[RMDB]
The data come from the RNA Mapping Database (RMDB), libraries RFM100 and RFMREP. This 177-nucleotide RNA was probed chemically with 2A3 and DMS. DMS adducts were read by reverse transcription with MarathonRT. The RNA was probed in 150 mM KOAc, 10 mM MgCl2 and 150 mM bicine (pH 8.5) at 24 C. Values are in units of 0.01, from 0 to 300, in steps of 10.
RNA sequence: GGGAACGACUCGAGUAGAGUCGAAAAGAAAGAAAGAAAGAAUUCUGCUCUACGCUGCUACAUCUAGUUGCAUUGUGACUUCUGUUUCAGGGAAAUGCAGCAUGAUGUAGUGGUGUAGCUCAGCAAAUAGAAUGUAUGCAUUCGUGCAUACAUUCUAAAAAGAAACAACAACAACAAC
Reactivity to 2A3 in 0.01 (KOAc 150mM, MgCl2 10mM, bicine 150mM(pH8.5), 24C), signal-to-noise 9, nucleotides 027 to 126: g140a020a070a010g120a040a080a010g120a050a090a010g100a050a060u150u040c010u030g010c010u000c000u000a000c000g000c010u010g000c000u000a000c000a000u000c000u030a060g000u000u000g000c000a010u030u030g140u120g170a140c040u140u080c030u170g230u230u180u260c080a030g010g010g060a030a030a000u000g000c000a000g000c000a010u030g000a000u000g000u000a000g000u000g000g000u000g000u000a000g000c010u010c010a020g000c060a020a040a040
Reactivity to DMS in 0.01 (KOAc 150mM, MgCl2 10mM, bicine 150mM(pH8.5), 24C), signal-to-noise 8, nucleotides 027 to 126: g010a080a070a070g010a080a050a090g000a090a090a110g010a120a110u010u010c020u000g010c040u010c010u000a010c010g010c000u000g010c000u000a010c000a000u000c000u010a300g010u000u000g000c000a010u000u000g000u020g010a130c070u020u010c050u000g010u010u020u020c060a050g000g000g000a130a020a010u000g010c010a010g010c000a160u000g000a010u000g000u000a010g020u000g010g010u000g000u000a000g010c290u010c050a040g010c240a040a060a080